[RMDB]
RNA sequence: GGGAACGACUCGAGUAGAGUCGAAAACUGAUGUGCUGGAGGAGACCGUGACGGUGGAGGAGGACCCCGGCACACCCACUUCCCAUGUGUCUAUUGUCACAUCCGAAGAUGGCACAACCCGGCGCACGCUGAAAACAGUUUUCGAACUGUUUUCAGCAAAAGAAACAACAACAACAAC
Reactivity to DMS in 0.01 (KOAc 150mM, MgCl2 10mM, bicine 150mM(pH8.5), 24C), signal-to-noise 4, nucleotides 027 to 126: c150u010g010a110u000g020u000g000c020u010g000g000a100g020g020a280g000a060c100c040g010u010g020a090c110g020g000u020g010g000a140g000g000a110g010g020a300c010c020c010c010g000g010c000a020c010a050c070c040c110a130c100u000u000c020c010c040a090u000g010u000g010u000c040u000a050u010u010g000u000c030a080c060a070u010c040c100g020a040a060g010a090u000g010g000c060a040c060a060a170c080c000c010g020g000c040g030c050a050c230
Reactivity to 2A3 in 0.01 (KOAc 150mM, MgCl2 10mM, bicine 150mM(pH8.5), 24C), signal-to-noise 3, nucleotides 027 to 126: c040u060g040a080u040g040u020g000c000u000g010g110a290g060g030a100g090a090c050c090g050u090g090a060c070g010g050u130g060g020a060g020g020a090g010g060a080c010c000c010c000g020g000c010a010c010a010c000c020c010a040c010u010u010c000c000c020a030u060g030u000g010u000c040u070a170u130u170g050u030c020a030c000a150u000c020c040g060a050a030g050a070u070g000g000c040a000c010a050a050c000c010c010g020g000c040g000c020a040c040
The record gives the reactivity of an RNA of 177 nucleotides to DMS and 2A3.
For DMS, 3,247 sequencing reads were counted.
The 2A3 profile rests on 4,408 reads.